[RMDB]
RNA sequence: GGGAACGACUCGAGUAGAGUCGAAAAAGAAAAGGGCAACGCGUAUUACAGUGCGAUUCAAGCACAGCGGGCGUUUGAUGCAGUGGAUGGUACUGUAAUGUCUGCUUCAUUUUCGUGAUCGCUCUAAAUUUAGUCAGGUGUUCGCACCUGACUAAAUAAAAGAAACAACAACAACAAC
Reactivity to 2A3 in 0.01 (KOAc 150mM, MgCl2 10mM, bicine 150mM(pH8.5), 24C), signal-to-noise 5, nucleotides 027 to 126: a000g090a010a030a000a000g000g000g000c010a080a030c040g030c020g070u080a020u030u020a030c010a020g010u010g020c020g050a010u030u090c060a050a020g000c000a000c000a020g020c050g070g160g000c070g040u070u110u090g090a160u040g010c030a020g090u010g030g070a060u080g070g040u070a010c000u000g000u020a020a020u020g040u030c040u020g000c000u070u070c110a200u050u030u010u050c020g020u030g070a110u100c060g000c030u000c010u040a120a160
Reactivity to DMS in 0.01 (KOAc 150mM, MgCl2 10mM, bicine 150mM(pH8.5), 24C), signal-to-noise 3, nucleotides 027 to 126: a070g030a060a030a050a030g000g000g030c050a080a050c110g000c170g020u000a030u000u000a020c040a020g030u000g010c020g010a020u010u010c070a190a100g010c020a010c020a030g000c020g000g010g030c140g000u020u000u010g000a090u010g030c030a110g040u020g030g020a040u030g000g020u020a010c000u000g000u000a010a010u000g000u000c080u000g000c020u020u010c100a100u000u000u000u000c020g010u020g010a090u010c070g010c040u030c010u000a060a120
Chemical mapping of a 177-nucleotide RNA with 2A3 and DMS. 2A3 adducts were read by reverse transcription with SuperScript II with manganese. For DMS the reverse transcriptase was MarathonRT. The reactions ran in a buffer of 150 mM KOAc, 10 mM MgCl2 and 150 mM bicine (pH 8.5), at 24 C. Reactivities are given for positions 27 through 126.